[RMDB]
RNA sequence: GGGAACGACUCGAGUAGAGUCGAAAAGAUAUGGAUCUGGAACUACUAAUACCGUGUCGGAAACGACACGGGUGUAGAAUAAUUAGCCAGAGUCCUAAGUCAAAAGCGUAUGGUUCGCCAUACGCAAUCAAUCGGUAAUCUUCGGAUUACCGAUUGAAAAAGAAACAACAACAACAAC
Reactivity to 2A3 in 0.01 (KOAc 150mM, MgCl2 10mM, bicine 150mM(pH8.5), 24C), signal-to-noise 2, nucleotides 027 to 126: g020a000u040a020u030g000g000a000u000c020u010g030g020a090a120c060u180a010c040u090a300a130u100a300c000c010g010u000g000u000c000g010g000a020a010a020c010g000a000c030a000c000g000g010g020u000g020u040a020g100a130a080u220a230a090u080u020a000g000c000c010a000g000a000g050u030c000c000u000a030a000g020u020c000a010a050a070a210g000c000g000u010a000u010g000g040u050u060c200g020c080c000a000u010a010c000g040c000a000a020
Reactivity to DMS in 0.01 (KOAc 150mM, MgCl2 10mM, bicine 150mM(pH8.5), 24C), signal-to-noise 3, nucleotides 027 to 126: g000a050u000a030u010g000g000a170u000c000u000g000g010a100a040c030u040a300c040u000a030a070u000a100c000c000g020u000g020u000c000g000g000a020a010a030c000g000a010c000a000c010g000g020g000u000g020u000a080g000a130a110u010a080a070u000u000a040g000c020c000a010g010a040g000u000c000c000u000a010a110g000u010c010a090a060a080a140g010c010g010u000a000u000g000g000u000u000c250g030c000c010a020u000a000c000g020c000a020a040